[RMDB]
RNA sequence: GGGAACGACUCGAGUAGAGUCGAAAAGAGUAAGGGAACGACUCGAGUAGAGUCGAAAAGGCUGACCAGCUAUGAGGUCAUACUUUGUCAUAGCAAGAUGGCAGAAGUGAGACUGCCACACACAGAACAUUAAUACGGUAUUCGUACCGUAUUAAUGAAAAGAAACAACAACAACAAC
Reactivity to DMS in 0.01 (KOAc 150mM, MgCl2 10mM, bicine 150mM(pH8.5), 24C), signal-to-noise 7, nucleotides 027 to 126: g010a080g010u000a060a100g000g000g010a060a110c040g010a010c000u000c000g000a090g010u020a090g000a020g000u000c000g000a010a020a050a060g010g000c130u020g000a020c010c010a150g010c000u020a000u010g010a030g000g000u000c010a040u030a040c200u020u030u030g020u000c000a000u000a020g030c010a200a090g000a110u000g000g000c010a000g000a080a110g020u040g000a170g010a110c000u010g010c000c000a030c080a090c210a090c200a100g020a120a190
Reactivity to 2A3 in 0.01 (KOAc 150mM, MgCl2 10mM, bicine 150mM(pH8.5), 24C), signal-to-noise 9, nucleotides 027 to 126: g140a010g080u230a090a100g020g020g020a040a030c010g000a000c000u000c000g000a010g040u120a020g020a000g000u000c000g000a010a000a000a000g090g020c060u020g000a000c000c000a000g000c000u000a000u000g010a000g010g000u000c010a020u110a180c100u090u140u300g010u000c000a000u000a000g000c000a000a040g070a060u040g000g000c010a000g010a190a050g180u120g100a070g040a070c000u010g010c000c010a000c000a000c000a000c000a020g260a180a010
The data come from the RNA Mapping Database (RMDB), library OK1LIB. This 177-nucleotide RNA was probed chemically with DMS and 2A3. The DMS profile rests on 18,700 reads. For 2A3 the reverse transcriptase was SuperScript II with manganese. The RNA was probed in 150 mM KOAc, 10 mM MgCl2 and 150 mM bicine (pH 8.5) at 24 C.